[RMDB]
RNA sequence: GGGAACGACUCGAGUAGAGUCGAAAAAGGGGAGCGUCGCCGAAGCAAAUAAAACCCCAUCGGUAUUAUUUGCUGGCCGUGCAUUGAAUAAAUGUAAGGCUGUCAAGAAAUCAUUUUCUUGGAGGGCUCAACGGUAUAAUUUCGAUUAUACCGUUGAAAAAGAAACAACAACAACAAC
Reactivity to 2A3 in 0.01 (KOAc 150mM, MgCl2 10mM, bicine 150mM(pH8.5), 24C), signal-to-noise 9, nucleotides 027 to 126: a000g050g010g010g010a040g020c030g050u060c040g000c030c010g070a050a000g000c000a000a000a010u020a010a030a020a020c010c020c030c040a140u160c090g000g000u010a040u040u000a010u000u020u010g010c030u030g020g000c000c000g030u030g000c000a000u000u060g060a110a050u210a210a040a000u030g010u030a030a040g020g000c020u020g080u050c000a000a010g030a020a040a020u160c140a110u070u090u060u000c010u000u010g030g010a060g050g050g000c010
Reactivity to DMS in 0.01 (KOAc 150mM, MgCl2 10mM, bicine 150mM(pH8.5), 24C), signal-to-noise 9, nucleotides 027 to 126: a070g000g010g000g010a080g010c070g010u010c050g020c030c020g010a140a040g010c000a010a010a010u000a000a010a090a020c010c000c280c300a100u040c210g010g010u000a040u000u000a010u000u000u000g000c000u000g000g010c010c010g010u000g000c000a000u000u000g000a170a070u040a050a010a000u000g000u000a040a060g000g010c010u010g010u010c020a010a010g000a010a020a050u060c180a170u020u000u000u000c000u000u000g000g000a070g010g000g000c100
An RNA of 177 nucleotides, treated with 2A3 and DMS and read out base by base. For 2A3 the reverse transcriptase was SuperScript II with manganese. DMS adducts were read by reverse transcription with MarathonRT.